[RMDB]
RNA sequence: GGGAACGACUCGAGUAGAGUCGAAAAGAUAUGGAGUCCCGGGAGAGCAACAGCCAUGGGUCGGAAACGACCCGAUGGACAUGCUCAGGGACUCCUAAGUCAAAACACGCGGCUUCGGCCGCGUGAACAUCCUAACAGGGUUCGCCCUGUUAGGAUGAAAAGAAACAACAACAACAAC
Reactivity to 2A3 in 0.01 (KOAc 150mM, MgCl2 10mM, bicine 150mM(pH8.5), 24C), signal-to-noise 1, nucleotides 027 to 126: g010a000u010a030u080g030g000a080g020u050c020c130c140g040g300g010a300g020a010g010c110a070a230c130a240g030c000c000a010u010g000g040g000u010c010g010g040a020a010a010c020g000a010c030c000c020g000a010u000g000g020a010c020a270u300g000c020u000c010a030g010g000g000a000c010u000c000c000u000a000a010g020u000c000a000a000a030a130c000a000c040g000c070g000g000c040u090u140c290g300g020c030c000g000c020g000u000g000a000a000
Reactivity to DMS in 0.01 (KOAc 150mM, MgCl2 10mM, bicine 150mM(pH8.5), 24C), signal-to-noise 1, nucleotides 027 to 126: g000a030u000a120u030g000g020a000g030u000c000c000c010g020g000g000a170g000a050g080c010a180a140c170a180g000c010c010a010u000g000g000g000u010c000g010g000a040a030a120c000g020a040c000c000c000g000a000u000g010g000a030c030a300u000g020c000u000c000a130g000g000g010a000c000u000c000c000u000a000a020g010u000c010a110a110a230a300c030a010c030g050c040g040g010c000u000u010c300g010g030c000c000g040c000g010u000g000a050a150